[RMDB]
RNA sequence: GGGAACGACUCGAGUAGAGUCGAAAAAAUUAAAACAACAACAAGAAAUUGUUAAAUCAAUUCACAAAACAAUUCAUGAAGGUACUGGUGCAGGUAGUGACUUCUUAGGCUGGGUUGAUUUACCAGUCUUCUUACCACGCUUCGGCGUGGUAAGAAGAAAAGAAACAACAACAACAAC
Reactivity to 2A3 in 0.01 (KOAc 150mM, MgCl2 10mM, bicine 150mM(pH8.5), 24C), signal-to-noise 1, nucleotides 027 to 126: a000a000u170u040a000a170a100a010c080a080a000c000a000a000c060a260a000g090a110a090a090u170u040g050u000u000a120a120a210u030c000a060a030u070u090c000a110c030a120a110a110a000c000a160a300u140u050c190a090u130g050a050a000g120g000u000a000c050u040g220g000u300g170c000a040g050g050u190a000g160u020g000a000c000u000u000c000u000u260a030g040g020c060u000g020g000g020u000u030g030a060u000u000u000a010c000c000a080g000u000
Chemical mapping of a 177-nucleotide RNA with 2A3. The reactions ran in a buffer of 150 mM KOAc, 10 mM MgCl2 and 150 mM bicine (pH 8.5), at 24 C.